[RMDB]
RNA sequence: GGGAACGACUCGAGUAGAGUCGAAAACCCCAGUUUUGCGGGGCAGAGCAUCCGCACCAAUCCGUGGAGGCCGACGCAGCUUAUCCUCUCUGCCUCUCAGAACUUCGGCAUUGUGGGCUCUGGUAAGCAAACCGACGAUUUUCGAAUCGUCGGUUUGAAAAGAAACAACAACAACAAC
Reactivity to DMS in 0.01 (KOAc 150mM, MgCl2 10mM, bicine 150mM(pH8.5), 24C), signal-to-noise 2, nucleotides 027 to 126: c060c000c010c170a080g010u000u000u010u000g030c120g010g010g000g020c000a010g000a030g020c200a080u000c030c020g020c030a110c080c070a100a130u000c110c080g000u010g000g010a140g030g000c050c070g010a080c120g000c050a070g010c050u000u010a100u000c090c050u010c000u000c010u000g010c020c010u000c020u040c010a000g000a020a020c030u000u010c130g000g020c060a090u010u000g000u010g010g000g010c020u000c020u000g010g010u010a100a120g020
This 177-nucleotide RNA was probed chemically with DMS. DMS (dimethyl sulfate) methylates the pairing face of unpaired adenines and cytosines. It was measured as part of the RMDB library OK2TST. The RNA was probed in 150 mM KOAc, 10 mM MgCl2 and 150 mM bicine (pH 8.5) at 24 C. Values cover nucleotides 27 to 126. The DMS profile rests on 1,941 reads.